[RMDB]
RNA sequence: GGGAACGACUCGAGUAGAGUCGAAAAUCUUGUACUUAUGGCUAUCAACAUGAUCAUCAAAGGUCGCUCUGUCUGGGUUGACCGUAAGCUGAAGGACUGCAUCAGGAGCGGAUGCAAAAGUCUUAACUUUAUGAAGACGACUCUUUGUGCCGCGGUACCUUUUUAACGCUUUCGAGCGUUAAAAAGGAAAAGAAACAACAACAACAAC
Reactivity to DMS in 0.01 (KOAc 150mM, MgCl2 10mM, bicine 150mM(pH8.5), 24C), signal-to-noise 1, nucleotides 027 to 156: u010c050u000u000g010u010a040c060u010u000a010u010g020g010c130u020a140u000c060a090a060c040a090u010g040a060u000c070a130u000c060a100a100a110g030g030u000c040g000c060u000c060u000g040u000c100u020g010g000g020u010u030g100a060c000c010g000u020a040a060g030c050u040g000a180a110g000g000a060c100u000g000c010a230u000c090a100g010g010a210g010c030g000g000a070u010g010c000a040a020a050a100g010u000c030u000u000a070a070c040u000u000u010a100u040g030a100a100g010a160c040g010a050c030u000c070u000u000u000g030u000g020c060c040g050c030g030g050u000a090
Reactivity to 2A3 in 0.01 (KOAc 150mM, MgCl2 10mM, bicine 150mM(pH8.5), 24C), signal-to-noise 3, nucleotides 027 to 156: u050c010u020u080g040u040a050c000u060u080a060u190g050g000c000u020a020u150c050a050a110c030a150u170g050a040u090c020a010u030c050a140a040a080g030g000u020c020g050c060u020c020u060g260u060c100u120g000g000g100u080u300g020a050c000c000g010u020a050a010g020c030u030g040a030a010g060g010a020c050u050g030c020a030u040c030a050g050g010a030g040c010g000g050a070u030g000c000a000a040a060a000g010u000c020u060u070a080a090c020u070u130u140a150u300g090a020a020g040a020c030g030a010c020u030c060u090u020u030g030u040g000c000c010g040c000g030g000u040a030